[RMDB]
RNA sequence: GGGAACGACUCGAGUAGAGUCGAAAAGAUAUGGAAAGCCAGGACAUGAACGAUUGUGUCGGAAACGACAUAGAGUUCAACAGCCUGGGCUUUCCUAAGUCAAAGAUGUGUAGUUCGCUACACAUCACUUUUACCGACGGUUCGCCGUCGGUAAAAGAAAAGAAACAACAACAACAAC
Reactivity to DMS in 0.01 (KOAc 150mM, MgCl2 10mM, bicine 150mM(pH8.5), 24C), signal-to-noise 2, nucleotides 027 to 126: g020a060u000a300u020g000g010a020a020a000g000c000c000a000g040g000a050c080a300u000g000a010a000c000g000a300u000u030g000u000g000u020c000g000g000a100a110a140c000g000a030c000a000u020a010g000a270g020u000u000c000a040a090c220a210g000c030c000u000g030g000g050c000u010u010u000c000c010u010a010a160g030u000c050a130a120a090g000a000u000g000u000g020u000a010g000u000u010c280g030c000u010a010c000a000c000a000u000c000a050
Reactivity to 2A3 in 0.01 (KOAc 150mM, MgCl2 10mM, bicine 150mM(pH8.5), 24C), signal-to-noise 1, nucleotides 027 to 126: g020a020u040a040u160g000g040a000a010a010g030c010c000a000g010g020a070c070a300u300g030a030a000c100g160a260u030u300g020u010g000u030c020g000g100a030a040a050c010g040a000c000a000u000a000g050a040g000u000u020c040a050a010c080a050g000c000c020u070g020g020g000c010u000u000u040c010c000u000a060a010g040u030c050a140a110a090g010a000u030g010u010g010u010a000g000u040u080c300g010c140u000a010c010a000c000a000u010c010a000